[RMDB]
RNA sequence: GGGAACGACUCGAGUAGAGUCGAAAAGGAACUAUUGGAAAGAGAGUGUCGAACACCCGUGACUGGGCAGAAGGUUCAGAUGACAUACAACUGGACCCAGUGGUUACAGACGUUGUAUACCAUGAUCCGCGUAGUUAACGUUCGCGUUAACUACGCGAAAAGAAACAACAACAACAAC
Reactivity to DMS in 0.01 (KOAc 150mM, MgCl2 10mM, bicine 150mM(pH8.5), 24C), signal-to-noise 3, nucleotides 027 to 126: g010g010a050a090c000u000a030u020u020g000g000a090a080a120g000a040g010a080g060u000g020u000c050g050a030a190c130a060c000c020c040g010u000g000a060c030u100g020g000g020c220a070g000a060a210g000g000u000u000c040a050g000a080u010g000a090c280a070u020a070c130a080a040c000u000g030g000a120c020c030c030a030g030u030g010g000u040u000a070c020a030g000a100c250g000u080u070g000u000a030u010a090c070c020a050u000g010a090u010c090
Reactivity to 2A3 in 0.01 (KOAc 150mM, MgCl2 10mM, bicine 150mM(pH8.5), 24C), signal-to-noise 3, nucleotides 027 to 126: g070g060a010a010c070u090a100u200u170g010g070a110a030a050g070a020g010a020g040u050g060u090c010g020a080a040c060a020c020c000c020g000u080g060a030c030u090g000g030g000c040a030g090a160a090g060g000u000u000c000a000g070a060u120g050a060c060a100u290a100c020a050a020c000u010g000g010a010c000c000c020a200g060u110g050g000u010u020a070c040a050g150a060c080g000u080u020g000u020a030u080a080c020c030a110u140g060a040u120c000